[RMDB]
RNA sequence: GGGAACGACUCGAGUAGAGUCGAAAAGACAGAGUUUAAAACAAAAAGACCGCUUGGGGACGUUUUGUGGCUGGCAUACAAGGAGGCAAUGCACUUACCAGCCGAGCCCAUCAAGUUCGAUCCUGAAUAUAUUUAAAUGCUUCGGCAUUUAAAUAUAAAAAGAAACAACAACAACAAC
Reactivity to DMS in 0.01 (KOAc 150mM, MgCl2 10mM, bicine 150mM(pH8.5), 24C), signal-to-noise 2, nucleotides 027 to 126: g030a100c070a140g000a080g020u000u030u010a130a050a130a160c110a020a050a080a130a150g000a040c030c050g020c040u000u010g010g000g000g030a030c010g010u020u000u020u030g020u020g020g040c000u000g010g000c130a060u000a090c190a020a030g050g000a070g010g010c140a060a090u000g010c050a100c030u000u000a040c010c000a010g020c010c010g010a100g000c010c000c000a050u000c070a030a060g010u010u000c090g010a070u010c020c000u000g000a070a080
Source: RMDB library OK2TRN, as collected in RNAgym. This 177-nucleotide RNA was probed chemically with DMS. The reactions ran in a buffer of 150 mM KOAc, 10 mM MgCl2 and 150 mM bicine (pH 8.5), at 24 C.